The record gives the reactivity of an RNA of 207 nucleotides to DMS and 2A3. The data come from the RNA Mapping Database (RMDB), library OK3TST. For 2A3, 3,173 sequencing reads were counted. For 2A3 the reverse transcriptase was SuperScript II with manganese. The DMS profile rests on 4,719 reads. Reactivities are given for positions 27 through 156.
[RMDB]
RNA sequence: GGGAACGACUCGAGUAGAGUCGAAAAAUACUUAGGACUGAACAUUUGCUCUAUAUGAAAUUUGUAUUAAUCAAGGUAUGAAUUGCAGCAACCACUCUAUUAAUUACAUAUGUUUGGCCAGGUGUGGUGGCUCACACCUGUAAUCCCAGCAAUUUGGGCCUAGUUAAAUAUUCGUAUUUAACUAGGCAAAAGAAACAACAACAACAAC
Reactivity to DMS in 0.01 (KOAc 150mM, MgCl2 10mM, bicine 150mM(pH8.5), 24C), signal-to-noise 2, nucleotides 027 to 156: a110u000a040c060u000u010a120g020g020a130c010u010g000a060a040c030a050u000u000u010g020c030u000c070u010a160u010a130u000g000a030a040a070u000u000u000g020u000a020u000u000a050a150u010c130a130a180g010g030u000a010u000g010a020a030u010u000g020c020a090g000c110a050a040c020c020a040c010u000c050u000a110u000u010a060a040u000u000a030c030a040u010a050u000g010u000u000u000g000g020c090c020a070g010g010u000g030u000g000g010u000g000g010c210u020c060a050c000a020c010c000u000g010u000a030a070u000c000c000c000a140g010c070a050a220u010u010u000g000g000
Reactivity to 2A3 in 0.01 (KOAc 150mM, MgCl2 10mM, bicine 150mM(pH8.5), 24C), signal-to-noise 4, nucleotides 027 to 156: a000u090a030c030u050u070a060g000g040a050c020u030g020a080a030c030a090u090u100u100g020c010u050c040u120a120u040a100u210g080a070a100a070u080u080u080g040u030a060u050u100a090a060u110c080a080a060g000g010u020a060u080g060a100a050u100u080g010c030a020g010c000a030a050c020c010a030c030u070c020u020a090u120u080a190a110u140u080a060c040a040u120a030u100g050u020u060u030g040g000c020c010a000g000g010u000g000u000g000g050u040g040g000c030u070c030a000c000a000c000c000u010g000u020a010a000u000c020c000c000a000g040c030a050a140u290u070u060g080g050